RNA sequence: GGGAACGACUCGAGUAGAGUCGAAAAAGGUGAUUAGCAAACGCGCUGGUGUUUUGCAGACCGACCUUCUGGGCUCUAAAGUUGGACACGUCCACGCUCACGGUGAUGAGGGUGUGAUCCACGGCGGGCAAGCAGUAGCUUAGGUCGGUCUGCACCGCACCCGUGUCCUUUUCGAAGGACACGGGUGAAAAGAAACAACAACAACAAC
Reactivity to 2A3 in 0.01 (KOAc 150mM, MgCl2 10mM, bicine 150mM(pH8.5), 24C), signal-to-noise 2, nucleotides 027 to 156: a000g100g020u060g020a090u160u180a070g040c020a130a110a060c080g020c000g050c030u020g000g040u030g070u060u160u110u030g000c000a000g010a030c000c000g000a000c030c000u060u000c030u070g070g050g000c010u000c000u090a120a050a020g040u120u200g070g020a000c030a030c060g050u000c010c000a040c130g090c030u080c000a090c040g100g100u160g150a280u120g010a120g000g020g000u020g030u040g030a260u000c000c000a000c000g000g000c000g000g000g020c000a030a000g070c030a030g010u240a040g050c100u120u140a000g000g000u000c000g000g000u010c000u010g000c000a000c000c010g010
Source information
This 207-nucleotide RNA was probed chemically with 2A3. Reactivities are given for positions 27 through 156. 2A3 adducts were read by reverse transcription with SuperScript II with manganese. Reactivities are rounded to 0.1 and cut off at 0 and 3. It was measured as part of the RMDB library OK3TST.